[RMDB]
Conditions: 150 mM KOAc, 10 mM MgCl2 and 150 mM bicine (pH 8.5), 24 C. Chemical mapping of a 177-nucleotide RNA with DMS. DMS adducts were read by reverse transcription with MarathonRT. The DMS profile rests on 817 reads.
RNA sequence: GGGAACGACUCGAGUAGAGUCGAAAACAUCGCGACUUCGGUCGCGAUGAAAGUUGAGCUCCCUCACGCAUAACAAAUCCCAAUGAGGGUAGGUGACUGCAAAACGACACGCCUUCGGGCGUGUCAAAUCGAUUUGGAUGUUCGCAUCCAAAUCGAUAAAAGAAACAACAACAACAAC
Reactivity to DMS in 0.01 (KOAc 150mM, MgCl2 10mM, bicine 150mM(pH8.5), 24C), signal-to-noise 1, nucleotides 027 to 126: c030a020u000c000g010c010g000a030c020u000u010c190g080g000u000c000g000c000g000a000u020g000a000a050a070g030u000u000g000a230g000c060u000c020c000c000u020c010a150c130g010c110a090u000a130a060c190a030a190a130u010c000c000c000a060a120u000g000a030g000g000g010u000a010g000g000u000g010a120c030u000g020c120a020a010a130a090c220g000a010c000a000c000g020c030c000u000u000c210g000g000g010c000g060u010g000u010c000a000a050